[RMDB]
RNA sequence: GGGAACGACUCGAGUAGAGUCGAAAACGGUCCGGCUAACAGGGCAGGAGGUCGGCCCCAAUUGCCUCAGGCCCAGCCACUCCGGGCCGCGAUCAGCCCGGGCUUUCCCUACUUUGGGGCCCAAUGCUUAGCUGACUACAUUCGUGUAGUCAGCUAAAAAAGAAACAACAACAACAAC
Reactivity to 2A3 in 0.01 (KOAc 150mM, MgCl2 10mM, bicine 150mM(pH8.5), 24C), signal-to-noise 4, nucleotides 027 to 126: c020g010g030u010c010c020g000g000c030u030a120a060c030a220g000g010g010c000a000g030g010a010g020g040u090c090g060g000c010c020c000c010a080a080u150u170g010c000c000u000c010a030g020g000c000c010c000a020g030c060c010a030c020u020c020c000g010g000g000c020c030g020c040g020a110u120c040a010g030c010c020c000g020g000g010c000u040u130u040c000c000c000u030a160c090u080u110u130g000g000g010g020c000c020c000a120a080u140g030c090
Reactivity to DMS in 0.01 (KOAc 150mM, MgCl2 10mM, bicine 150mM(pH8.5), 24C), signal-to-noise 2, nucleotides 027 to 126: c060g000g000u010c010c000g000g000c110u020a200a160c140a090g020g000g030c000a010g030g020a000g000g010u000c180g030g000c040c020c030c040a120a100u000u020g010c000c000u000c000a040g000g000c000c000c020a090g020c040c050a120c160u000c030c000g000g000g040c010c010g000c040g010a070u000c130a180g000c080c060c080g000g010g000c040u000u000u000c030c000c010u000a140c190u030u000u000g020g000g020g020c000c020c090a070a070u020g030c090